[RMDB]
Chemical mapping of a 207-nucleotide RNA with 2A3 and DMS.

RNA sequence: GGGAACGACUCGAGUAGAGUCGAAAAAGCACUGGUACGAUACGUCGUACCAGUGCGGUCGUUGGGAUGGAACGCAAUUAAAUACAUGUGUGACGUGUAUUUGCGAACGACGUAAUUAUUUUUCAAAAUCACGCUAUCGUGUUCGCACGAUAGCGAAGAUUUAUAAGAUGUUCGCAUCUUAUAAAUCAAAAGAAACAACAACAACAAC
Reactivity to 2A3 in 0.01 (KOAc 150mM, MgCl2 10mM, bicine 150mM(pH8.5), 24C), signal-to-noise 5, nucleotides 027 to 156: a000g000c000a000c000u000g000g000u000a000c000g000a020u030a060c210g100u010c000g000u000a000c000c000a000g000u000g000c010g000g000u000c000g000u020u030g100g010g040a120u130g050g070a080a050c020g000c010a010a030u200u110a170a060a000u030a000c010a020u020g110u040g120u170g260a060c020g020u000g000u010a000u000u020u080g010c010g010a020a000c010g050a000c020g020u030a090a070u120u120a130u060u190u020u050u110c070a060a050a050a090u150c080a040c080g000c000u000a000u000c000g000u000g010u060u030c080g040c070a000c000g000a000u000a000g000c000g000a000a000
Reactivity to DMS in 0.01 (KOAc 150mM, MgCl2 10mM, bicine 150mM(pH8.5), 24C), signal-to-noise 3, nucleotides 027 to 156: a070g030c000a010c010u000g000g010u010a020c000g010a060u000a090c300g070u000c000g040u020a020c010c000a020g010u000g000c000g000g030u010c020g020u000u000g020g010g010a140u000g000g000a100a250c010g000c010a120a140u010u000a040a030a040u000a020c000a010u000g040u000g020u010g020a120c080g010u010g010u010a010u000u000u000g020c050g000a060a120c020g010a180c020g030u000a050a100u000u010a160u020u000u010u000u030c100a050a060a060a110u000c120a180c020g000c010u000a020u010c000g070u000g010u000u000c300g050c030a020c000g020a000u000a000g010c000g020a010a020
About this RNA:
DMS adducts were read by reverse transcription with MarathonRT. It was measured as part of the RMDB library M2RFPK. For 2A3, 4,168 sequencing reads were counted. For DMS, 5,830 sequencing reads were counted.